[RMDB]
RNA sequence: GGGAACGACUCGAGUAGAGUCGAAAAUUGAAAUUGAACCGUCCUGUUAUCGAAAGAUAGGCAGAAGAUACGAAAUGUGUGACAGCAUGGGAAGUAAAGGCAGACCGUGGUGCCCUUGAGUAUCUUAAUUAGGGGGACGAGUUCGCUCGUCCCCCAACAAUUUAUGCGUGUUCGCACGCAUAAAUUGAAAAGAAACAACAACAACAAC
Reactivity to DMS in 0.01 (KOAc 150mM, MgCl2 10mM, bicine 150mM(pH8.5), 24C), signal-to-noise 2, nucleotides 027 to 156: u010u000g030a040a100a140u000u000g010a050a130c020c050g060u010c020c030u000g020u000u010a060u000c040g000a170a150a260g010a030u010a040g030g010c060a110g000a080a060g010a070u000a040c010g020a060a270a100u000g010u000g020u030g020a040c050a060g010c030a030u010g000g000g030a140a250g020u010a030a080a100g000g000c030a130g020a300c020c030g050u010g020g020u030g000c000c010c020u010u010g010a300g050u010a070u000c030u000u000a070a130u000u000a160g030g010g020g080g030a020c000g010a020g030u000u000c190g000c010u000c030g000u000c000c000c000c010c000a000a000
Reactivity to 2A3 in 0.01 (KOAc 150mM, MgCl2 10mM, bicine 150mM(pH8.5), 24C), signal-to-noise 3, nucleotides 027 to 156: u090u090g040a040a020a010u070u070g040a040a040c020c020g080u090c010c000u030g020u030u010a070u030c040g060a030a030a020g010a040u020a040g090g020c000a000g040a100a000g000a010u010a000c020g040a060a120a020u100g120u020g040u070g100a090c010a040g060c000a060u000g010g020g000a100a020g020u070a080a120a090g170g060c060a020g040a080c020c000g030u000g020g150u010g000c000c000c000u000u010g000a010g010u000a000u010c020u020u060a150a130u120u180a070g000g010g020g000g000a000c000g000a000g020u060u050c150g030c030u000c010g000u020c000c000c000c000c000a000a000
Structure probing data (DMS and 2A3) for a 207-nucleotide construct. 2A3 adducts were read by reverse transcription with SuperScript II with manganese.